[RMDB]
RNA sequence: GGGAACGACUCGAGUAGAGUCGAAAAGAUCCUUACUUGGACUCCACCGAGCGAGAGGUAUCUCAUUAGCCUCUUAGUUAACGCUGGGAUCCUAGGAUCCAUCGGUUAGGUGAGGGAUCCCAUCCACCUAGUAAGGUUCCUUCGGGAACCUUACUAGAAAAGAAACAACAACAACAAC
Reactivity to DMS in 0.01 (KOAc 150mM, MgCl2 10mM, bicine 150mM(pH8.5), 24C), signal-to-noise 2, nucleotides 027 to 126: g000a060u000c000c010u000u010a140c120u000u000g000g020a120c030u000c040c000a040c040c030g040a050g050c100g000a010g000a020g000g010u000a030u000c220u010c220a170u020u010a200g000c010c020u010c010u000u000a060g030u000u010a080a090c050g010c170u000g000g000g000a010u000c000c010u010a070g010g000a030u000c010c020a040u000c030g010g030u000u020a090g000g000u000g000a140g000g000g000a010u000c000c010c000a060u010c020c020a200c240
Reactivity to 2A3 in 0.01 (KOAc 150mM, MgCl2 10mM, bicine 150mM(pH8.5), 24C), signal-to-noise 2, nucleotides 027 to 126: g020a040u040c000c010u020u070a160c030u060u100g070g010a010c000u000c040c000a030c010c000g030a000g060c020g030a020g000a000g010g030u070a110u080c240u060c080a160u120u130a020g040c000c010u010c000u000u020a050g000u030u130a140a040c070g010c070u030g000g000g000a020u010c020c020u040a040g000g100a020u040c000c020a020u080c040g180g090u230u250a130g030g000u040g030a120g000g000g040a030u000c030c000c000a010u000c000c000a020c020